[RMDB]
RNA sequence: GGGAACGACUCGAGUAGAGUCGAAAAGGGUGUGACCUAGGAACCGUAGGGGUAUUCUCAAAGGAAGCUUUUGCAGUGACGCCCAUGUAAGUGGGAUAUAACAACAGAACUCGUAUGAGUAGCCUAAUAAAUCGGACCUUCUUCGGAAGGUCCGAAACAACAAGUGAUACUUCGGUAUCACUUGUUGAAAAGAAACAACAACAACAAC
Reactivity to DMS in 0.01 (KOAc 150mM, MgCl2 10mM, bicine 150mM(pH8.5), 24C), signal-to-noise 2, nucleotides 027 to 156: g010g010g040u020g010u000g010a040c040c040u010a120g020g020a070a090c070c050g000u000a100g020g010g000g030u000a070u000u000c060u000c040a050a110a190g010g000a060a080g010c040u000u000u000u000g020c000a160g020u010g010a190c120g000c000c000c000a020u010g030u000a040a160g040u000g000g010g020a090u000a070u000a130a100c040a060a110c070a110g010a050a040c030u000c040g010u000a070u000g010a050g020u000a060g020c030c010u000a020a060u000a030a110a150u000c000g010g010a020c000c000u000u000c010u000u000c300g040g000a020a010g020g010u000c000c010g010a000a010a120
Reactivity to 2A3 in 0.01 (KOAc 150mM, MgCl2 10mM, bicine 150mM(pH8.5), 24C), signal-to-noise 4, nucleotides 027 to 156: g060g010g020u080g020u020g060a080c010c030u050a060g040g030a040a060c030c050g020u050a020g030g030g020g000u040a100u110u090c070u020c030a070a070a000g090g010a060a030g040c020u040u040u090u100g030c060a020g000u010g040a030c070g010c010c000c010a010u060g090u130a100a120g010u020g010g020g020a000u040a020u020a100a050c060a010a020c010a030g040a080a020c010u010c050g070u170a080u190g010a020g020u040a010g030c000c010u070a120a060u110a100a120a060u030c000g010g000a000c000c000u010u000c000u020u020c090g080g000a000a000g000g000u000c000c000g000a000a000a000
The record gives the reactivity of an RNA of 207 nucleotides to DMS and 2A3. Reactivities are given for positions 27 through 156. Reactivities are rounded to 0.1 and cut off at 0 and 3. 2A3 adducts were read by reverse transcription with SuperScript II with manganese. The 2A3 profile rests on 3,191 reads. Conditions: 150 mM KOAc, 10 mM MgCl2 and 150 mM bicine (pH 8.5), 24 C.